RNA sequence: GGGAACGACUCGAGUAGAGUCGAAAACGUCGCCACUGGCCGCUGAAAAGUGGUGUGGCACUGCUCCGGCGAGGACGUGGGCGGACCGGCGGGAUGGGCUCCAGUCACCGGCUCGGUGGGCGACCGUAUGUGCAUAUGGUUUCGACCAUAUGCACAUAAAAGAAACAACAACAACAAC
Reactivity to 2A3 in 0.01 (KOAc 150mM, MgCl2 10mM, bicine 150mM(pH8.5), 24C), signal-to-noise 6, nucleotides 027 to 126: c030g040u020c050g010c000c000a000c020u020g080g000c000c010g010c040u070g040a050a050a050a030g060u030g020g040u070g040u050g040g000c010a010c030u020g020c040u020c030c020g050g020c040g030a080g060g050a040c030g070u140g000g030g060c050g020g020a080c040c030g010g030c080g030g010g010a060u100g040g030g000c020u010c030c010a020g040u040c000a030c040c020g030g000c050u080c090g030g030u050g020g080g010c010g000a020c000c000g030u040
Reactivity to DMS in 0.01 (KOAc 150mM, MgCl2 10mM, bicine 150mM(pH8.5), 24C), signal-to-noise 3, nucleotides 027 to 126: c120g020u010c070g000c000c000a000c010u010g020g010c010c000g030c120u010g000a060a060a130a050g010u000g000g010u000g030u000g000g030c020a040c010u000g000c050u010c030c040g000g010c050g010a170g010g040a050c040g020u010g010g020g000c050g000g010a110c130c030g000g000c070g000g000g000a090u010g000g000g000c060u020c040c030a080g000u000c050a050c120c020g020g000c000u040c050g010g000u000g020g000g020c020g000a030c030c100g010u010